Annotation
Conditions: 150 mM KOAc, 10 mM MgCl2 and 150 mM bicine (pH 8.5), 24 C. The record gives the reactivity of an RNA of 177 nucleotides to 2A3 and DMS. Reactivities are rounded to 0.1 and cut off at 0 and 3. It was measured as part of the RMDB library OK2TRN. For 2A3 the reverse transcriptase was SuperScript II with manganese. The DMS profile rests on 1,607 reads.
[RMDB]
RNA sequence: GGGAACGACUCGAGUAGAGUCGAAAAGUUUGCGCAAAUCAGCGUAGACCAAGCGAGCGUGACGGAAGGUGGCGAACUGACGUACACCAUUACGUUAGUGGACAAAGACGGCAACGCGGUGAGCGUACCGUCAUGCUCAGUUCGCUGAGCAUGACGGAAAAGAAACAACAACAACAAC
Reactivity to 2A3 in 0.01 (KOAc 150mM, MgCl2 10mM, bicine 150mM(pH8.5), 24C), signal-to-noise 2, nucleotides 027 to 126: g050u030u070u060g000c010g010c030a100a160a300u120c070a090g000c030g000u020a020g000a040c020c020a070a000g080c070g000a020g030c080g020u080g040a030c020g050g000a010a040g130g040u050g000g000c030g020a090a020c060u100g060a040c000g000u080a090c040a030c020c040a060u120u120a010c000g010u060u020a020g000u020g020g000a020c050a050a100a020g020a030c010g010g000c030a050a000c000g000c010g040g050u180g040a020g010c000g000u000a050
Reactivity to DMS in 0.01 (KOAc 150mM, MgCl2 10mM, bicine 150mM(pH8.5), 24C), signal-to-noise 3, nucleotides 027 to 126: g000u000u000u020g020c020g010c020a150a080a150u000c190a080g020c010g030u000a010g010a140c010c180a080a080g000c030g000a110g000c090g040u010g010a040c100g010g010a050a050g000g060u010g000g000c040g000a180a050c100u000g000a040c040g000u000a080c270a180c160c150a060u000u000a050c020g000u000u000a080g010u000g010g010a160c090a070a090a040g000a040c050g000g000c050a120a020c060g000c020g030g000u030g000a210g010c020g020u000a140